[RMDB]
Structure probing data (2A3) for a 207-nucleotide construct. The reactions ran in a buffer of 150 mM KOAc, 10 mM MgCl2 and 150 mM bicine (pH 8.5), at 24 C. The data come from the RNA Mapping Database (RMDB), library M2RFPK.

RNA sequence: GGGAACGACUCGAGUAGAGUCGAAAAACAUAUUACGAUAUGAUUCAGAUGGUGUUUUACUGGUUCGUACCAAGGGACAUAAUGGUUUCUUGUUUCCAACCAAAGAACAAGUGGCGAGCCUGAAUAAAAAACUGACUGCCGUUCGCGGCAGUCAGAAGGCACUUAUAAGCUUCGGCUUAUAAGUGCCAAAAGAAACAACAACAACAAC
Reactivity to 2A3 in 0.01 (KOAc 150mM, MgCl2 10mM, bicine 150mM(pH8.5), 24C), signal-to-noise 1, nucleotides 027 to 156: a000c050a020u160a040u150u190a060c040g030a030u020a010u040g040a060u040u110c040a030g040a190u090g070g070u040g040u020u010u010u040a060c060u020g030g000u010u010c030g000u050a040c040c000a020a060g090g000g000a000c010a030u240a150a090u300g090g000u030u000u000c010u000u000g040u020u010u010c010c030a040a050c010c000a150a010a000g040a000a040c050a030a020g010u040g090g040c060g010a010g050c000c000u000g030a040a020u140a130a070a000a030a010a010c010u000g030a000c000u000g020c090c010g050u080u000c300g010c010g110g000c000a000g000u000c000a000g000a010a000